RNA sequence: GGGAACGACUCGAGUAGAGUCGAAAAUGUAGAGCCGAACAGACAUCUGGAGAUGAAUGUGAUGGCCCCGUGGUAUUGGGUAGAAAGUUCUGCUUUGUUCUGUGAUUACGCGCCAUUUCGAUCACCGCGUCGUAUUCCGUUUCGACGGAAUACGACGAAAAGAAACAACAACAACAAC
Reactivity to 2A3 in 0.01 (KOAc 150mM, MgCl2 10mM, bicine 150mM(pH8.5), 24C), signal-to-noise 1, nucleotides 027 to 126: u110g010u060a060g000a000g040c010c000g020a000a030c030a010g080a020c000a000u010c040u200g110g060a300g080a150u080g080a090a020u090g080u040g030a130u080g070g030c000c010c000c010g000u090g030g000u120a060u190u090g040g000g000u030a050g140a090a070a000g030u090u040c000u000g110c040u020u040u060g040u030u040c030u100g080u010g030a010u040u170a080c080g050c030g000c020c010a040u050u070u060c010g000a000u020c100a030c000c010g000
Reactivity to DMS in 0.01 (KOAc 150mM, MgCl2 10mM, bicine 150mM(pH8.5), 24C), signal-to-noise 2, nucleotides 027 to 126: u000g020u000a060g010a080g000c010c030g010a160a070c050a050g000a300c010a020u000c010u000g010g000a150g000a060u010g010a050a180u000g010u000g000a190u000g010g020c010c020c030c050g040u000g010g010u000a050u000u000g010g010g010u010a030g020a060a080a120g010u000u010c020u000g000c060u000u010u010g040u010u000c030u000g030u000g010a090u000u000a060c130g000c090g000c030c060a110u000u000u000c060g000a060u000c050a050c060c090g020
This 177-nucleotide RNA was probed chemically with 2A3 and DMS. DMS adducts were read by reverse transcription with MarathonRT. High 2A3 reactivity points to a flexible backbone, as in loops and unpaired stretches. For DMS, 1,373 sequencing reads were counted. Reactivities are given for positions 27 through 126.